[RMDB]
RNA sequence: GGGAACGACUCGAGUAGAGUCGAAAAGCUUAUGGGAGGGGCAAAUGGGUGCCAGGAAGUGAAUCUUAGAAGCCCACAGGCGGAUGGGAAGUCACCCCAGCUCCUUGUUCGGUUUAUAUCCAUGCCCGAUUCUAAGCUGUUUCGACAGCUUAGAAUCAAAAGAAACAACAACAACAAC
Reactivity to DMS in 0.01 (KOAc 150mM, MgCl2 10mM, bicine 150mM(pH8.5), 24C), signal-to-noise 3, nucleotides 027 to 126: g010c040u000u000a050u010g030g000g010a080g040g030g000g030c020a010a070a040u010g020g010g020u000g040c100c060a080g010g030a050a100g020u000g000a060a080u010c030u010u000a050g010a300a210g000c000c010c250a070c270a160g000g010c050g000g000a180u000g000g000g000a050a100g010u000c030a070c020c030c020c060a220g010c020u000c030c010u000u000g010u010u010c100g010g020u000u020u010a100u010a070u030c020c020a070u020g000c040c020c040
Reactivity to 2A3 in 0.01 (KOAc 150mM, MgCl2 10mM, bicine 150mM(pH8.5), 24C), signal-to-noise 1, nucleotides 027 to 126: g000c000u230u120a080u250g060g110g030a060g050g030g000g070c000a050a060a110u120g010g000g030u020g040c090c080a040g090g030a090a050g100u120g100a020a010u020c000u000u040a030g040a120a030g040c070c000c000a110c020a050g110g000c050g060g010a010u030g010g000g020a070a140g040u070c010a030c000c020c000c010a000g030c000u050c000c000u020u020g040u090u030c050g010g030u020u110u000a120u070a030u140c050c040a060u100g030c000c000c060

Overview
This 177-nucleotide RNA was probed chemically with DMS and 2A3. Source: RMDB library OK2TRN, as collected in RNAgym. For DMS the reverse transcriptase was MarathonRT. DMS (dimethyl sulfate) methylates the pairing face of unpaired adenines and cytosines. Values are in units of 0.01, from 0 to 300, in steps of 10.